[RMDB]
RNA sequence: GGGAACGACUCGAGUAGAGUCGAAAAGCGUCUCUCGCCCACCGACCUGAUGCCCGCUUGAGGAUUCUCCGAUACCACUCCGGGCGCCGCUGACAAGCUCUAGCAUCGACUCGAACAGCGAUGGGAGCCUCCCUGAUCUUUUCGAAGAUCAGGGAGGAAAAGAAACAACAACAACAAC
Reactivity to DMS in 0.01 (KOAc 150mM, MgCl2 10mM, bicine 150mM(pH8.5), 24C), signal-to-noise 1, nucleotides 027 to 126: g030c040g020u010c020u020c060u000c020g040c050c050c020a170c130c000g000a050c060c050u000g000a130u000g040c050c040c040g020c120u020u000g010a120g010g010a140u000u000c080u000c010c050g040a120u010a090c120c030a120c080u010c020c030g010g000g000c060g030c020c040g000c040u010g020a120c060a050a140g020c060u000c020u000a090g000c020a090u000c010g000a100c040u000c050g010a110a240c140a050g000c050g010a030u000g000g010g000a090g020
Structure probing data (DMS) for a 177-nucleotide construct. DMS adducts were read by reverse transcription with MarathonRT. The data come from the RNA Mapping Database (RMDB), library OK2TST. Conditions: 150 mM KOAc, 10 mM MgCl2 and 150 mM bicine (pH 8.5), 24 C.